[RMDB]
RNA sequence: GGGAACGACUCGAGUAGAGUCGAAAAGUUCAUCCCCUGAUCAAGGAUGCCCGAAACGGUGAGGCGGAAAGCAAAUUAAAUAACGUCAACCAAUCGGGACGGUUGGCCAGUUAAGAAGUGAGGAUUCAAAAGAUCGAACCGUUCGCGGUUCGAUCAACCUUCAUUAGGCGUUCGCGCCUAAUGAAGGAAAAGAAACAACAACAACAAC
Reactivity to 2A3 in 0.01 (KOAc 150mM, MgCl2 10mM, bicine 150mM(pH8.5), 24C), signal-to-noise 2, nucleotides 027 to 156: g020u110u190c000a080u080c000c000c000c000u040g010a080u010c000a000a030g020g000a070u100g020c020c000c030g020a050a040a080c140g000g000u050g020a150g010g030c050g040g050a160a110a000g160c080a100a100a140u270u230a070a080a120u220a120a030c010g010u000c010a000a000c000c040a000a070u000c000g000g000g000a000c060g030g010u000u070g000g000c010c000a030g000u070u150a170a070g050a110a020g020u040g120a110g100g000a090u030u030c050a000a090a110a090g010a000u000c000g000a000a000c020c000g040u000u000c140g010c000g070g000u000u000c010g010a000u000c000a000a000